Structure probing data (DMS and 2A3) for a 177-nucleotide construct. Source: RMDB library TTRDEL, as collected in RNAgym. The DMS profile rests on 3,063 reads. For 2A3, 4,512 sequencing reads were counted.

RNA sequence: GGGAACGACUCGAGUAGAGUCGAAAAGAUAUGGACCAGUGAGGGAGAAGUUCGGAAACGAAUACUUCUUUGAUCUCAGUGGUCCUAAGUCAAAAGUCACUUCUCACCUUCGGGUGAGAAGUGACAACAUCAAACUCUACUUCGGUAGAGUUUGAUGAAAAGAAACAACAACAACAAC
Reactivity to DMS in 0.01 (KOAc 150mM, MgCl2 10mM, bicine 150mM(pH8.5), 24C), signal-to-noise 2, nucleotides 027 to 126: g000a050u000a300u010g000g000a020c000c010a010g010u000g000a010g000g000g000a010g000a000a000g010u000u000c010g020g000a110a060a200c010g000a030a090u000a060c010u000u000c000u010u010u020g000a100u010c000u000c000a020g000u000g000g000u000c000c000u000a010a050g010u000c050a050a080a090a120g010u000c000a010c000u000u000c000u000c010a010c010c000u000u010c180g030g020g020u000g000a000g000a000a000g000u000g010a000c010a010a120
Reactivity to 2A3 in 0.01 (KOAc 150mM, MgCl2 10mM, bicine 150mM(pH8.5), 24C), signal-to-noise 2, nucleotides 027 to 126: g030a000u090a020u140g000g000a000c010c000a040g280u010g010a010g000g020g000a030g000a010a000g000u030u020c000g000g060a060a070a080c020g010a010a040u180a220c020u050u000c000u250u170u070g120a110u040c010u000c020a130g270u010g040g000u000c000c000u010a040a020g060u020c040a030a030a050a120g000u040c000a010c000u000u000c000u000c000a000c010c000u040u080c300g150g000g000u000g000a000g000a000a000g000u000g000a000c000a010a000